Description: The data come from the RNA Mapping Database (RMDB), library OK2TRN. An RNA of 177 nucleotides, treated with 2A3 and DMS and read out base by base. 2A3 adducts were read by reverse transcription with SuperScript II with manganese. Conditions: 150 mM KOAc, 10 mM MgCl2 and 150 mM bicine (pH 8.5), 24 C. DMS adducts were read by reverse transcription with MarathonRT.
[RMDB]
RNA sequence: GGGAACGACUCGAGUAGAGUCGAAAAGGACAGGGAGGAUCCAUGAGGUACCGGAUCAAGUAGGUACCAAGCUAGCUAUAUAUACGCUCGCUAGGAUAGAGCGUUACCGGAAACGGGACCUGUCCGAACCUAUCACGGAGUUCGCUCCGUGAUAGGUAAAAGAAACAACAACAACAAC
Reactivity to 2A3 in 0.01 (KOAc 150mM, MgCl2 10mM, bicine 150mM(pH8.5), 24C), signal-to-noise 2, nucleotides 027 to 126: g020g000a010c010a000g030g000g030a050g070g050a050u000c010c000a060u130g060a030g070g020u020a010c010c020g010g040a080u200c050a050a050g090u070a030g070g010u000a010c020c000a010a000g020c010u000a000g000c030u020a040u010a010u030a020u010a300c050g000c010u000c020g000c030u060a050g000g050a050u050a060g110a010g030c030g040u040u040a060c020c010g040g000a100a050a020c010g020g000g030a020c010c000u000g000u000c000c000g010a000
Reactivity to DMS in 0.01 (KOAc 150mM, MgCl2 10mM, bicine 150mM(pH8.5), 24C), signal-to-noise 3, nucleotides 027 to 126: g000g000a030c010a010g000g000g000a180g040g010a050u000c020c010a160u000g010a210g010g000u000a010c000c000g000g010a180u000c140a100a120g000u010a100g000g000u000a010c010c000a100a070g000c050u000a020g000c020u000a090u010a110u010a100u030a090c150g010c000u000c060g040c070u000a050g010g000a070u010a090g000a080g000c070g020u010u000a060c010c010g000g000a050a110a110c020g000g010g000a110c000c020u000g000u000c000c000g000a040